[RMDB]
RNA sequence: GGGAACGACUCGAGUAGAGUCGAAAACUCGAAGAACAUGGCGAGCGCGUGCGUUAUCUUCACUCAGAUAUCGACACCGUCGAACGUAUGGAGAUUAUCCGCGACUUGCGUCUGGGUGAGUUCGACGCUCCACGGAUAUCUUCGGAUAUCCGUGGAGAAAAGAAACAACAACAACAAC
Reactivity to DMS in 0.01 (KOAc 150mM, MgCl2 10mM, bicine 150mM(pH8.5), 24C), signal-to-noise 2, nucleotides 027 to 126: c020u000c020g000a080a120g010a060a090c090a150u030g000g010c050g010a070g000c090g050c090g010u000g020c120g030u000u000a020u010c030u000u000c040a030c070u000c020a030g000a070u000a060u000c060g040a050c030a100c200c200g000u000c000g040a060a110c070g000u020a100u010g010g030a000g040a100u000u010a090u000c000c000g000c080g020a080c050u000u000g010c060g010u010c040u010g000g020g010u000g000a000g000u000u000c080g020a140c150g020
Reactivity to 2A3 in 0.01 (KOAc 150mM, MgCl2 10mM, bicine 150mM(pH8.5), 24C), signal-to-noise 2, nucleotides 027 to 126: c000u010c040g080a120a080g060a110a060c080a090u170g080g000c000g010a010g010c030g020c000g000u100g050c020g000u040u110a000u020c020u020u020c010a000c020u070c070a080g060a180u120a130u080c000g080a040c150a290c200c260g020u020c000g000a030a020c060g030u100a100u150g040g000a080g000a050u100u040a030u160c000c000g000c000g130a170c040u020u140g020c030g070u070c020u090g050g000g030u050g030a080g050u030u000c020g020a020c050g030
This 177-nucleotide RNA was probed chemically with DMS and 2A3. For DMS, 1,200 sequencing reads were counted. High 2A3 reactivity points to a flexible backbone, as in loops and unpaired stretches. The RNA was probed in 150 mM KOAc, 10 mM MgCl2 and 150 mM bicine (pH 8.5) at 24 C. For 2A3 the reverse transcriptase was SuperScript II with manganese. The 2A3 profile rests on 1,148 reads.